[RMDB]
RNA sequence: GGGAACGACUCGAGUAGAGUCGAAAAUAAAACAUGGUUACCAUAAACUAUCCGUGAAGGUAGCCAUGAACACGGAUAGUUAAAUAAAAGCUGAGCGUUAGGAAAAACCUAAUGCUCAGGAAAAAAACAUAUGAGAAUUGUUCGCAAUUCUCAUAUGAAAAGAAACAACAACAACAAC
Reactivity to DMS in 0.01 (KOAc 150mM, MgCl2 10mM, bicine 150mM(pH8.5), 24C), signal-to-noise 2, nucleotides 027 to 126: u010a090a070a110a240c060a000u000g010g000u010u010a120c010c000a100u000a110a100a020c000u000a050u010c020c020g010u020g020a130a060g030g000u000a030g030c070c150a040u000g000a040a120c110a080c030g000g000a030u000a020g010u000u000a030a060a050u010a070a090a070a100g000c010u000g000a030g000c000g010u000u000a000g010g000a080a180a100a160a080c010c010u010a000a000u000g000c000u000c000a000g000g000a000a010a050a100a050a020a040
Reactivity to 2A3 in 0.01 (KOAc 150mM, MgCl2 10mM, bicine 150mM(pH8.5), 24C), signal-to-noise 2, nucleotides 027 to 126: u060a000a040a000a000c010a010u040g080g020u050u060a020c020c000a030u200a090a100a010c010u020a010u040c010c020g010u010g070a120a060g130g010u040a000g000c000c000a000u060g010a000a010c000a000c010g020g000a010u020a040g020u070u130a050a110a030u080a050a110a020a000g140c000u000g010a000g000c000g010u010u000a000g020g020a160a090a090a130a090c000c000u000a010a010u000g000c010u000c000a000g010g010a000a060a000a000a000a000a000